Annotation
Source: RMDB library 15KLIB, as collected in RNAgym. An RNA of 170 nucleotides, treated with DMS and 2A3 and read out base by base. For 2A3 the reverse transcriptase was SuperScript II with manganese. Values cover nucleotides 27 to 129.
[RMDB]
RNA sequence: GGGAACGACUCGAGUAGAGUCGAAAAUGCACCUGUCUAUGAGGCUGAUACCGAACAGACACAGAAUGUUACUGUUAAACCUAAGAGGUUACGCAAAAAGCGUAAUGUUGACCCUUUGUCCAAUUUUGAGGACGGCGCUUCGGCGCCGUCAAAAGAAACAACAACAACAAC
Reactivity to DMS in 0.01 (KOAc 150mM, MgCl2 10mM, bicine 150mM(pH8.5), 24C), signal-to-noise 4, nucleotides 027 to 129: u040g020c100a120c050c070u000g030u040c030u090a120u050g030a220g080g000c040u030g000a080u080a100c000c000g000a120a060c000a030g040a010c070a110c170a200g000a060a090u100g000u160u010a110c040u060g030u050u000a150a060a050c130c010u040a150a130g030a120g020g020u000u000a000c000g000c020a000a050a230a010a220g060c010g150u020a000a020u000g040u040u040g010a230c100c040c040u030u030u030g010u070c010c010a000a140u010u000u020u000g040a270g000
Reactivity to 2A3 in 0.01 (KOAc 150mM, MgCl2 10mM, bicine 150mM(pH8.5), 24C), signal-to-noise 1, nucleotides 027 to 129: u160g000c070a110c000c000u090g000u000c000u120a150u040g000a080g000g020c030u000g000a030u020a170c010c000g000a000a000c010a000g040a050c030a000c000a050g250a020a170u140g020u000u160a140c030u010g050u150u140a000a000a000c040c020u060a100a000g080a050g290g080u050u050a060c000g000c000a000a000a000a020a240g020c000g040u000a000a000u060g100u130u000g030a170c000c000c000u000u000u040g050u000c090c000a130a080u050u020u050u080g000a000g020
For DMS, 3,335 sequencing reads were counted.